Structure probing data (DMS and 2A3) for a 177-nucleotide construct. The data come from the RNA Mapping Database (RMDB), library TTRDEL. The reactions ran in a buffer of 150 mM KOAc, 10 mM MgCl2 and 150 mM bicine (pH 8.5), at 24 C. Reactivities are given for positions 27 through 126.
RNA sequence: GGGAACGACUCGAGUAGAGUCGAAAAGAUAUGGAGAGGUAAAUGUGGGAGCGAUUAGUUCGGAAACGAACUAUUCGCGAAGAACACAUUUAAAUAUUCCUAAGUCAAACGCACCUUCGGGUGCGAAGCUUGUAAAGCUGUUCGCAGCUUUACAAGCAAAAGAAACAACAACAACAAC
Reactivity to DMS in 0.01 (KOAc 150mM, MgCl2 10mM, bicine 150mM(pH8.5), 24C), signal-to-noise 2, nucleotides 027 to 126: g000a010u000a050u010g000g000a020g040a190g020g000u000a000a000a000u000g000u000g000g010g000a010g030c000g000a010u000u000a000g000u010u010c010g020g010a020a020a060c000g010a010a040c000u000a010u000u000c000g000c010g000a040a060g000a170a180c010a010c010a000u000u000u000a000a100a150u000a110u010u000c000c020u010a010a150g000u000c020a030a090a180c010g010c000a000c000c000u000u010c240g000g000g000u000g000c000g010a040a040
Reactivity to 2A3 in 0.01 (KOAc 150mM, MgCl2 10mM, bicine 150mM(pH8.5), 24C), signal-to-noise 2, nucleotides 027 to 126: g000a000u030a020u100g020g000a050g000a030g200g300u230a000a010a000u010g000u010g000g020g000a030g000c020g010a000u000u030a000g000u000u000c000g000g030a010a000a020c010g010a000a010c000u000a010u000u000c000g000c000g030a240a010g000a000a000c000a000c010a000u000u000u080a090a140a020u300a150u220u000c000c000u000a000a020g010u000c010a090a110a090c000g000c010a000c000c000u020u080c300g150g040g010u000g030c010g000a010a010